The record gives the reactivity of an RNA of 177 nucleotides to DMS. DMS adducts were read by reverse transcription with MarathonRT. It was measured as part of the RMDB library OK1LIB. The reactions ran in a buffer of 150 mM KOAc, 10 mM MgCl2 and 150 mM bicine (pH 8.5), at 24 C.

RNA sequence: GGGAACGACUCGAGUAGAGUCGAAAAGAAAACGUACGGCUGACGUGCGGUCAGCAAAAGAAACCAACAUGUGUAAUGUUGAUACACGAAAGAAAGCGUAGUCUGACACUGCGAGUCAGUAAAGAAAGGGUAAGUUAGUCUUCGGACUAACUUACCCAAAAGAAACAACAACAACAAC
Reactivity to DMS in 0.01 (KOAc 150mM, MgCl2 10mM, bicine 150mM(pH8.5), 24C), signal-to-noise 1, nucleotides 027 to 126: g000a070a060a130a080c120g000u000a010c040g020g000c120u020g040a020c000g000u050g040c030g070g000u000c000a000g000c170a050a060a000a110g000a190a030a260c260c000a000a000c050a020u030g000u040g000u020a110a050u000g000u000u000g050a090u020a000c050a000c080g000a080a110a100g000a040a090a140g080c110g000u000a070g000u000c000u000g000a000c120a000c080u010g000c000g070a060g000u000c000a000g030u000a010a010a110g000a080a090a180